[RMDB]
RNA sequence: GGGAACGACUCGAGUAGAGUCGAAAAACAGAGAACGGAUCUCCUCCGGCGGCAGGGCCCUGCCGCGCGGGAGACGGCUGCCGCGCAGGUUACGCACCGCCCGGAUGUGCUGGAAGCUUUCGACGUCUCGGAUCACUAAUUUCGAUUAGUGAUCCGAAAAAGAAACAACAACAACAAC
Reactivity to 2A3 in 0.01 (KOAc 150mM, MgCl2 10mM, bicine 150mM(pH8.5), 24C), signal-to-noise 4, nucleotides 027 to 126: a000c070a010g100a010g020a080a010c030g060g060a080u010c000u000c010c010u060c030c010g080g000c010g020g000c020a060g050g100g200c110c150c010u010g000c000c000g010c010g040c010g010g000g000a010g030a000c010g010g030c000u020g010c000c010g000c010g000c060a110g040g000u060u060a040c130g030c040a010c010c010g020c000c010c010g030g010a150u210g020u050g110c000u030g030g070a130a030g020c010u030u050u030c030g060a070c050g050u010c010
Reactivity to DMS in 0.01 (KOAc 150mM, MgCl2 10mM, bicine 150mM(pH8.5), 24C), signal-to-noise 2, nucleotides 027 to 126: a120c070a100g010a180g020a080a080c080g000g000a120u000c000u000c000c000u000c090c020g000g000c000g000g000c030a010g000g000g030c170c170c010u000g020c000c020g000c000g000c240g010g000g000a020g010a070c050g010g040c020u000g000c030c010g000c290g020c030a050g000g000u020u050a030c150g000c080a070c030c000g020c020c040c010g000g000a060u020g040u020g020c000u030g010g020a130a050g000c050u010u000u020c000g010a210c090g000u010c050
This 177-nucleotide RNA was probed chemically with 2A3 and DMS.
2A3 adducts were read by reverse transcription with SuperScript II with manganese.
The reactions ran in a buffer of 150 mM KOAc, 10 mM MgCl2 and 150 mM bicine (pH 8.5), at 24 C.
The data come from the RNA Mapping Database (RMDB), library OK1LIB.